RNA sequence: GGGAACGACUCGAGUAGAGUCGAAAAGAUAUGGAGCUCAUCACGAGAUUCGCUCGGAAACGAGCGGGAGAUCGAUGAGUGACGAGCUCCUAAGUCAAACGUUGCAAGUGUUCGCACUUGCAACGAAGUUCCGUACCACGUUCGCGUGGUACGGAACAAAAGAAACAACAACAACAAC
Reactivity to 2A3 in 0.01 (KOAc 150mM, MgCl2 10mM, bicine 150mM(pH8.5), 24C), signal-to-noise 1, nucleotides 027 to 126: g000a010u020a010u080g010g010a000g000c000u000c020a040u010c030a010c010g090a090g010a120u300u300c010g030c030u000c010g010g020a010a020a000c000g000a000g010c040g010g030g000a300g000a020u000c010g220a300u150g070a000g000u010g000a000c000g000a010g050c000u000c010c000u020a000a000g020u040c030a090a060a000c020g000u000u000g000c000a010a000g010u030g130u150u280c300g100c210a020c000u000u000g050c000a000a000c010g010a000a000